Record summary: The data come from the RNA Mapping Database (RMDB), library OK3TST. This 207-nucleotide RNA was probed chemically with 2A3. The RNA was probed in 150 mM KOAc, 10 mM MgCl2 and 150 mM bicine (pH 8.5) at 24 C. Reactivities are rounded to 0.1 and cut off at 0 and 3. Reactivities are given for positions 27 through 156. For 2A3 the reverse transcriptase was SuperScript II with manganese.
[RMDB]
RNA sequence: GGGAACGACUCGAGUAGAGUCGAAAAUCUUAAUCCAAAUAUAAUGAUGACCUAUAUGCCCUAUUAUCAUACUGUCAACUAUAGUAUACCUAGAGAACUUACGAUACAUCUGUUUCCUGUAAUCGUUAAAUUUUACAAAUCUAUAACAUGCUAAACCUCGGAUAGUGUGAUUCGUCACACUAUCCGAAAAAGAAACAACAACAACAAC
Reactivity to 2A3 in 0.01 (KOAc 150mM, MgCl2 10mM, bicine 150mM(pH8.5), 24C), signal-to-noise 1, nucleotides 027 to 156: u000c000u030u080a030a040u040c030c040a010a080a020u210a030u020a110a110u100g060a020u050g060a060c010c010u060a180u070a020u250g030c000c000c010u060a050u110u000a020u110c010a050u060a080c000u050g060u110c010a060a010c020u060a020u000a040g020u000a040u030a110c010c010u020a040g000a010g030a090a030c000u050u030a000c060g010a020u020a030c020a070u040c070u050g100u030u130u030c000c000u070g000u010a030a160u000c010g000u000u010a070a090a060u110u190u050u040a020c040a020a110a000u050c040u010a040u000a100a040c010a000u120g030c000u020a100a020a000c010c010